[RMDB]
RNA sequence: GGGAACGACUCGAGUAGAGUCGAAAAGAUAUGGACUACCUGGAGAUCAAGUCUACUAUGAAGAGUUGUCGGAAACGACAACUUGGAGUAGACAUUGAUCUAUGAAGGGUAGUCCUAAGUCAAAAACUACUAACUGUGUUCGCACAGUUAGUAGUAACGCCUUACAUACGUUCGCGUAUGUAAGGCGAAAAGAAACAACAACAACAAC
Reactivity to 2A3 in 0.01 (KOAc 150mM, MgCl2 10mM, bicine 150mM(pH8.5), 24C), signal-to-noise 2, nucleotides 027 to 156: g040a000u060a020u060g000g010a000c000u000a000c010c030u080g050g010a090g000a020u020c000a010a010g000u030c000u020a000c010u050a200u230g060a030a000g020a020g020u000u000g000u000c000g000g080a050a040a050c010g000a000c010a000a000c000u010u010g010g000a010g010u000a010g030a010c010a070u000u040g000a000u030c010u020a270u010g010a000a010g000g000g000u000a000g000u020c000c000u000a000a000g020u000c020a040a060a070a060a060c000u000a000c000u010a000a000c000u000g000u000g040u140u090c260g070c140a000c030a000g000u010u000a000g000u000a000g000u000a000a000
This 207-nucleotide RNA was probed chemically with 2A3. 2A3 adducts were read by reverse transcription with SuperScript II with manganese. The reactions ran in a buffer of 150 mM KOAc, 10 mM MgCl2 and 150 mM bicine (pH 8.5), at 24 C. It was measured as part of the RMDB library RNAMAK.